The record gives the reactivity of an RNA of 177 nucleotides to DMS and 2A3.
[RMDB]
RNA sequence: GGGAACGACUCGAGUAGAGUCGAAAAGAUAUGGACGUGACAAGACAUGUGACCUCGGAAACGAGGUACAACAGCUUGCCACGUCCUAAGUCAAACAUAUCUCUGCCGUUCGCGGCAGAGAUAUGAACAGGGAUAUGUCGUUCGCGACAUAUCCCUGAAAAGAAACAACAACAACAAC
Reactivity to DMS in 0.01 (KOAc 150mM, MgCl2 10mM, bicine 150mM(pH8.5), 24C), signal-to-noise 2, nucleotides 027 to 126: g000a000u010a280u000g000g010a000c000g030u000g010a020c010a010a000g000a110c100a070u020g000u000g010a030c000c000u000c000g000g000a110a030a130c010g000a010g000g000u000a030c100a040a010c040a150g010c000u000u000g000c000c000a000c020g000u010c000c000u000a010a050g000u000c010a160a130a280c030a000u000a000u000c000u000c000u020g000c000c000g020u000u010c260g030c030g000g000c000a000g010a000g040a000u000a000u010g000a070a150
Reactivity to 2A3 in 0.01 (KOAc 150mM, MgCl2 10mM, bicine 150mM(pH8.5), 24C), signal-to-noise 1, nucleotides 027 to 126: g020a000u070a050u160g010g000a010c010g000u000g020a000c010a010a010g020a110c210a300u120g030u040g070a040c000c010u000c020g030g040a040a040a020c000g000a000g010g020u010a000c000a010a030c050a000g120c010u010u000g030c000c000a000c020g010u010c000c000u010a010a000g010u000c020a030a060a040c000a000u000a000u000c020u020c000u010g020c010c010g040u140u080c300g020c010g040g000c030a000g000a000g000a000u000a010u010g010a010a010
About this RNA: It was measured as part of the RMDB library TTRDEL. For DMS, 1,374 sequencing reads were counted.